RNA sequence: GGGAACGACUCGAGUAGAGUCGAAAAGAAAGAAAGAAAGAGCGGUGAAGAUAGAACAAAUUAUGUGACGGAAGCCGUCACAGUCGUCCUGACCAACUGUGACGAUAGCAAGUGCCGUCUGAGCUAAUUAAAAGAGUGUAUUCGUACACUCUUUUAAAAAAGAAACAACAACAACAAC
Reactivity to DMS in 0.01 (KOAc 150mM, MgCl2 10mM, bicine 150mM(pH8.5), 24C), signal-to-noise 9, nucleotides 027 to 126: g000a080a080a090g010a080a070a070g000a060a060a070g000a070g020c060g010g020u010g000a080a070g010a090u010a060g010a090a080c120a050a070a090u030u020a060u020g010u010g000a010c010g000g010a120a100g010c050c010g000u000c000a000c000a000g000u000c070g010u020c050c040u010g000a070c100c100a100a020c020u000g000u010g010a010c010g010a110u030a090g000c040a060a090g010u020g000c010c010g010u000c010u010g000a100g010c080u010a050a130
Reactivity to 2A3 in 0.01 (KOAc 150mM, MgCl2 10mM, bicine 150mM(pH8.5), 24C), signal-to-noise 8, nucleotides 027 to 126: g050a000a050a010g060a030a080a000g050a020a070a010g060a010g030c050g040g030u080g060a050a030g040a080u140a050g060a050a020c040a050a120a030u230u160a090u260g070u060g010a000c010g010g010a060a010g030c020c000g000u010c000a000c000a000g010u010c020g040u040c020c040u090g070a130c010c030a020a020c010u010g020u050g000a000c000g020a060u090a020g010c040a090a040g050u060g130c000c010g010u010c000u010g010a010g040c030u050a110a090